Chemical mapping of a 177-nucleotide RNA with DMS and 2A3.
2A3 adducts were read by reverse transcription with SuperScript II with manganese.
The RNA was probed in 150 mM KOAc, 10 mM MgCl2 and 150 mM bicine (pH 8.5) at 24 C.
[RMDB]
RNA sequence: GGGAACGACUCGAGUAGAGUCGAAAAGCGCGGAGGUGUAGCGAUAGGACAGCAGCGUUUUCACCAGGAAGGUGAUCUGGGUGGCCGAGCGCGCAUCCACGCGCAUGACCGGGAUGCGGAAGCCUUCCUCAAUCCUGGGAUUCGUCCCAGGAUUGAGAAAAGAAACAACAACAACAAC
Reactivity to DMS in 0.01 (KOAc 150mM, MgCl2 10mM, bicine 150mM(pH8.5), 24C), signal-to-noise 4, nucleotides 027 to 126: g000c050g000c000g010g000a270g000g020u000g010u000a030g080c020g030a080u010a130g000g010a090c030a030g010c020a040g010c300g000u030u000u010u000c000a060c010c030a190g030g000a070a120g000g020u010g010a010u030c020u000g000g000g020u010g010g010c020c010g000a140g000c020g030c010g010c020a030u000c030c260a120c040g000c010g010c010a040u010g000a160c030c010g020g000g000a070u020g000c100g000g000a090a170g000c070c040u000u000c050
Reactivity to 2A3 in 0.01 (KOAc 150mM, MgCl2 10mM, bicine 150mM(pH8.5), 24C), signal-to-noise 4, nucleotides 027 to 126: g000c000g000c010g000g010a090g040g010u030g010u130a140g010c020g020a080u110a050g000g000a010c000a020g010c010a000g030c100g090u070u050u080u060c000a010c010c000a020g210g150a240a150g000g030u010g010a010u020c010u030g150g120g130u020g010g000c000c010g000a050g060c010g030c000g000c000a020u010c000c010a050c020g000c000g000c000a020u060g060a010c000c010g000g020g000a050u110g040c010g020g040a040a060g020c000c000u040u030c010